[RMDB]
RNA sequence: GGGAACGACUCGAGUAGAGUCGAAAACACAUAGUGCGUGUCCUCAGGGGUGAGCACCUCUUCGGUCUCCUGAGCAAUGAACCCGCUCAUCCACCGGUUCUUCCUCCUCCCCCAGAAGUAGGCCGCCGAAUAAUUGGUGUUUCGACACCAAUUAUUCAAAAGAAACAACAACAACAAC
Reactivity to DMS in 0.01 (KOAc 150mM, MgCl2 10mM, bicine 150mM(pH8.5), 24C), signal-to-noise 7, nucleotides 027 to 126: c060a080c110a090u010a120g020u000g010c060g020u000g010u010c070c010u000c090a090g010g000g010g010u010g010a070g020c120a090c060c040u000c090u000u010c090g010g010u010c030u000c040c060u000g010a060g010c120a070a070u000g000a070a110c070c070c070g010c030u000c040a090u000c050c070a080c070c060g000g000u000u000c050u000u000c040c010u000c030c010u000c010c010c010c010c020a100g000a050a080g020u000a060g010g010c050c030g020c180c100
Reactivity to 2A3 in 0.01 (KOAc 150mM, MgCl2 10mM, bicine 150mM(pH8.5), 24C), signal-to-noise 4, nucleotides 027 to 126: c080a000c010a070u140a100g110u110g110c040g010u050g040u060c010c000u010c040a040g030g010g010g030u110g050a030g020c040a050c010c010u080c030u090u110c060g050g010u010c000u010c010c020u030g030a040g000c010a010a160u150g040a050a070c000c020c030g010c010u060c020a060u050c030c030a030c030c000g020g000u050u040c000u040u040c000c010u000c000c010u010c000c000c000c000c010a030g050a120a010g030u070a020g020g020c020c000g020c020c020
The record gives the reactivity of an RNA of 177 nucleotides to DMS and 2A3.
Conditions: 150 mM KOAc, 10 mM MgCl2 and 150 mM bicine (pH 8.5), 24 C.
For DMS the reverse transcriptase was MarathonRT.